[RMDB]
RNA sequence: GGGAACGACUCGAGUAGAGUCGAAAAGCGCGCUCAACGUCUACGAGCUGCAGAAAGCCCUGAUCGCCGCGGGCGUUGCGGGUUCGCACUGGGAGGACCAGUUGGCCUCUGAGAAGAAGUGCGGCCACUUUAAAGUCCAUUUCGAUGGACUUUAAAGAAAAGAAACAACAACAACAAC
Reactivity to DMS in 0.01 (KOAc 150mM, MgCl2 10mM, bicine 150mM(pH8.5), 24C), signal-to-noise 9, nucleotides 027 to 126: g000c060g010c030g010c020u010c030a080a170c120g010u020c050u010a130c090g000a070g020c010u020g030c070a070g010a080a100a110g010c060c020c010u000g000a090u020c120g000c020c030g010c170g000g010g010c060g000u000u010g010c090g010g010g010u010u030c020g020c000a010c000u010g000g010g000a030g010g000a100c010c030a220g010u030u020g000g000c010c000u010c000u000g000a160g030a110a160g010a120a040g010u000g010c000g000g000c010c010a220
Reactivity to 2A3 in 0.01 (KOAc 150mM, MgCl2 10mM, bicine 150mM(pH8.5), 24C), signal-to-noise 9, nucleotides 027 to 126: g050c040g000c010g010c040u020c050a040a070c060g100u030c030u070a050c050g040a040g050c060u090g020c030a010g110a110a100a020g040c020c030c000u030g060a090u130c090g000c030c010g020c040g010g020g000c020g000u020u060g030c060g020g020g000u110u290c010g000c010a010c010u030g040g010g010a020g020g030a150c010c010a090g110u090u190g060g000c000c000u020c010u040g100a100g040a150a030g090a080a010g020u010g010c000g010g000c000c000a030